An RNA of 207 nucleotides, treated with DMS and 2A3 and read out base by base. The data come from the RNA Mapping Database (RMDB), library OK3TST. Values cover nucleotides 27 to 156. The reactions ran in a buffer of 150 mM KOAc, 10 mM MgCl2 and 150 mM bicine (pH 8.5), at 24 C.
[RMDB]
RNA sequence: GGGAACGACUCGAGUAGAGUCGAAAAGGCCAGCACGACCUUCGCGUGCUCCGCCAGGAGCUCACCGGCGGCGGUCAGUUCCACCCGCCUGCCCCUGCGGUUCAGCAGUGCCUGGCCCGCCUCCUGCUCCAGGGCGGUCAGCUGCUGGGAGACCGCCCCGGUAUUGUCGGUUCGCCGACAAUACCGGAAAAGAAACAACAACAACAAC
Reactivity to DMS in 0.01 (KOAc 150mM, MgCl2 10mM, bicine 150mM(pH8.5), 24C), signal-to-noise 1, nucleotides 027 to 156: g030g170c000c010a130g030c070a070c040g000a050c060c040u010u010c050g000c060g050u010g010c030u010c030c020g100c130c070a130g050g010a070g000c000u000c030a060c050c050g030g020c060g040g000c010g020g000u040c040a120g010u000u000c030c020a150c190c000c010g000c030c030u020g020c040c010c020c060u070g020c070g000g010u020u010c060a150g070c030a030g040u010g000c050c020u000g060g000c010c010c040g000c020c020u000c000c020u040g010c080u010c010c020a180g000g010g040c000g000g030u010c000a300g020c040u000g000c020u000g000g020g000a160g000a050c000c020g020c000c000
Reactivity to 2A3 in 0.01 (KOAc 150mM, MgCl2 10mM, bicine 150mM(pH8.5), 24C), signal-to-noise 2, nucleotides 027 to 156: g010g000c010c020a010g020c030a020c030g100a200c010c050u210u180c060g010c020g100u050g010c000u010c010c030g070c060c010a050g010g020a000g030c070u060c120a120c100c090g020g000c030g010g010c000g000g000u030c020a040g020u060u060c020c010a030c020c020c010g030c000c030u110g000c030c010c010c010u040g000c000g030g050u110u240c050a010g010c000a010g030u040g110c020c020u050g000g010c000c010c000g030c000c010u080c010c030u060g080c020u030c040c050a060g000g000g000c000g010g010u020c010a000g020c020u060g020c020u050g010g040g020a040g030a000c020c010g000c000c000